This 177-nucleotide RNA was probed chemically with DMS. It was measured as part of the RMDB library TTRINS.
[RMDB]
RNA sequence: GGGAACGACUCGAGUAGAGUCGAAAAGAUAUGGAAAAAAUGAUCGAGAUGGGUUCAGGACAUGCCUAAUCGUCGGAAACGACGAUAGGCAACAGCCUGGCCCAUCUCGAUCAUUUUUUCCUAAGUCGAAUUCUCUAUGGUUCGCCAUAGAGAAUUCAAAAGAAACAACAACAACAAC
Reactivity to DMS in 0.01 (KOAc 150mM, MgCl2 10mM, bicine 150mM(pH8.5), 24C), signal-to-noise 2, nucleotides 027 to 126: g010a070u000a300u000g000g000a000a000a030a010a010a000u000g010a000u000c000g010a010g010a010u000g000g020g030u000u020c010a020g010g000a040c130a290u000g000c010c010u000a070a110u000c000g010u000c000g000g000a090a120a280c000g020a010c000g000a010u000a000g000g010c010a000a000c270a150g010c010c000u000g010g020c000c000c000a000u000c010u000c010g000a000u020c000a000u000u000u000u000u000u000c000c000u000a010a090g000u000c070